Structure probing data (2A3) for a 177-nucleotide construct. For 2A3, 693 sequencing reads were counted.

RNA sequence: GGGAACGACUCGAGUAGAGUCGAAAAUACGACUGCUUCCGUCUUGCGUGGAGGCUUCUUGCUUCGGGGAAGUAUGUGCGUCUCGGUAAGCAGUGCAAUGCCGUUUUCCGCGCUUAUAUACUGCAACACGCCCUGCAUGGUUCGCCAUGCAGGGCGUAAAAGAAACAACAACAACAAC
Reactivity to 2A3 in 0.01 (KOAc 150mM, MgCl2 10mM, bicine 150mM(pH8.5), 24C), signal-to-noise 2, nucleotides 027 to 126: u150a000c000g030a010c000u020g000c000u050u000c000c000g050u060c140u140u240g030c010g000u030g080g030a080g000g010c000u000u010c070u050u200g160c090u080u030c010g060g010g000g030a000a010g010u130a080u250g300u080g020c010g050u000c010u020c020g130g000u170a080a000g000c000a010g040u090g030c000a000a050u160g000c010c040g000u000u030u100u000c000c000g040c000g010c060u110u000a000u000a000u000a300c030u030g040c000a110a000c040
Annotation:
Conditions: 150 mM KOAc, 10 mM MgCl2 and 150 mM bicine (pH 8.5), 24 C.